[RMDB]
RNA sequence: GGGAACGACUCGAGUAGAGUCGAAAAACACACACACAGAGAGAAGGAAGAGUGUGUGUGCGGGCGGUGCAUGGCUCUCUCACACUCACUCUCACGCGGCCACCACCGCAGCCGCAGCCGCACAAAAUGCCCUAGUAUAGUUCGCUAUACUAGGGCAAAAAGAAACAACAACAACAAC
Reactivity to DMS in 0.01 (KOAc 150mM, MgCl2 10mM, bicine 150mM(pH8.5), 24C), signal-to-noise 2, nucleotides 027 to 126: a090c060a070c030a010c020a020c010a010c070a090g010a110g000a050g030a120a070g020g030a120a080g010a150g030u000g000u000g000u000g020u000g010c080g010g000g020c040g000g000u010g000c160a060u000g010g010c030u030c010u020c010u000c020a120c110a040c060u000c100a090c080u010c030u000c010a100c190g030c050g000g000c020c050a060c180c020a100c020c030g040c010a140g010c020c050g000c070a180g000c040c050g000c080a060c140a070a030a070a100
Structure probing data (DMS) for a 177-nucleotide construct.
Values are in units of 0.01, from 0 to 300, in steps of 10.
Conditions: 150 mM KOAc, 10 mM MgCl2 and 150 mM bicine (pH 8.5), 24 C.
High DMS reactivity at an A or C suggests that its Watson-Crick edge is free.